Notes:
Chemical mapping of a 177-nucleotide RNA with 2A3 and DMS. Values are in units of 0.01, from 0 to 300, in steps of 10. Source: RMDB library TTRINS, as collected in RNAgym. The RNA was probed in 150 mM KOAc, 10 mM MgCl2 and 150 mM bicine (pH 8.5) at 24 C.

RNA sequence: GGGAACGACUCGAGUAGAGUCGAAAAGAUAUGGAGCGACUACCCACCUAGUAUCUUCCUGAACUACGAGCCUCAGUGUCGGAAACGACACUGCUCGCAGGAAGAUACUAGAGGUCGCUCCUAAGUCGAAAAUAGGACUGUUCGCAGUCCUAUUUUCAAAAGAAACAACAACAACAAC
Reactivity to 2A3 in 0.01 (KOAc 150mM, MgCl2 10mM, bicine 150mM(pH8.5), 24C), signal-to-noise 1, nucleotides 027 to 126: g190a100u300a170u300g000g000a000g010c010g040a010c010u140a260c010c000c020a000c020c000u010a010g000u000a000u060c010u020u030c000c000u030g000a180a060c090u230a060c300g010a030g080c050c140u300c180a020g010u010g030u040c020g000g090a100a080a160c020g000a010c030a000c010u020g020c000u000c000g000c000a020g000g000a000a000g000a000u010a000c000u000a000g000a000g000g000u000c010g000c000u000c000c000u020a010a000g050u140c110
Reactivity to DMS in 0.01 (KOAc 150mM, MgCl2 10mM, bicine 150mM(pH8.5), 24C), signal-to-noise 2, nucleotides 027 to 126: g000a120u040a130u000g010g010a060g020c000g000a000c010u020a110c000c000c020a300c070c010u000a010g010u000a000u000c000u000u000c000c020u010g020a080a080c210u010a300c010g020a000g000c250c300u020c230a010g000u000g000u000c000g000g020a190a060a260c000g020a020c000a000c010u000g000c000u000c010g050c020a020g000g000a020a020g000a000u000a030c000u000a030g000a060g020g000u000c000g000c000u000c000c000u010a000a090g000u020c120